[RMDB]
RNA sequence: GGGAACGACUCGAGUAGAGUCGAAAAGGCAACCUGGUUAGAGCGCGGGGACACACGGUCAUCCACAACCUCGCGGAUGGCUUGCCAGACCCUGUACCUGUGCAGCUCACAGGGCUGUGGGACACGGACUCUGCCAAGGAUUCGUCCUUGGCAGAGUAAAAGAAACAACAACAACAAC
Reactivity to DMS in 0.01 (KOAc 150mM, MgCl2 10mM, bicine 150mM(pH8.5), 24C), signal-to-noise 3, nucleotides 027 to 126: g010g000c000a040a050c040c010u000g010g000u010u000a090g010a080g020c050g000c030g020g000g020g000a100c200a060c170a140c080g020g000u010c070a110u010c020c020a030c080a070a220c080c050u010c030g030c000g000g000a050u000g010g010c220u000u000g000c010c020a070g010a120c030c010c010u000g020u000a100c010c000u000g000u000g030c030a080g000c210u000c030a020c040a030g000g010g010c150u000g010u000g000g000g000a030c050a090c170g000g000
Reactivity to 2A3 in 0.01 (KOAc 150mM, MgCl2 10mM, bicine 150mM(pH8.5), 24C), signal-to-noise 2, nucleotides 027 to 126: g000g000c010a000a010c000c010u070g010g140u210u190a120g020a060g220c040g010c010g040g020g020g020a020c030a010c000a030c230g100g030u070c050a120u070c040c010a020c030a060a110c020c000u030c020g010c020g030g050a090u080g020g020c040u040u030g000c020c000a010g000a100c000c000c020u000g010u070a100c000c000u000g040u060g000c040a040g020c050u020c030a020c010a010g000g000g000c040u030g020u070g020g010g030a030c040a010c090g080g010